[RMDB]
RNA sequence: GGGAACGACUCGAGUAGAGUCGAAAAUUGCAGUGGAUGUCCAGAAGAAGACAUCGCAGAAGAAGGCACAGCUUUGUAUCCGUGUCGAUCCGGUCAUAUUCGCCUCCAAGAAACGGGACACACCGAAGUUGUAAAGGGGGUUCGCCCCCUUUACAACAAAAGAAACAACAACAACAAC
Reactivity to DMS in 0.01 (KOAc 150mM, MgCl2 10mM, bicine 150mM(pH8.5), 24C), signal-to-noise 3, nucleotides 027 to 126: u000u000g040c040a120g040u010g010g020a060u000g010u000c010c050a200g000a130a170g000a200a160g010a060c020a010u000c000g000c080a090g000a080a050g010a120a110g010g030c040a010c030a090g010c090u010u000u010g010u000a070u000c050c070g000u000g020u000c060g000a080u000c020c020g000g000u000c080a060u000a140u000u010c070g010c030c000u010c060c070a040a080g010a040a050a080c050g000g000g020a040c050a040c080a100c040c030g000a040a130
Reactivity to 2A3 in 0.01 (KOAc 150mM, MgCl2 10mM, bicine 150mM(pH8.5), 24C), signal-to-noise 1, nucleotides 027 to 126: u050u050g030c030a010g080u020g120g060a000u040g000u000c060c050a010g080a140a000g000a040a000g000a190c000a010u040c020g010c050a000g050a240a010g010a000a040g040g020c000a000c000a080g000c020u140u150u110g020u060a060u070c010c040g000u020g030u000c020g060a010u030c110c000g050g090u090c050a080u040a190u160u070c060g030c020c010u000c030c010a060a000g080a100a050a000c030g000g000g050a030c000a000c000a040c180c050g050a070a020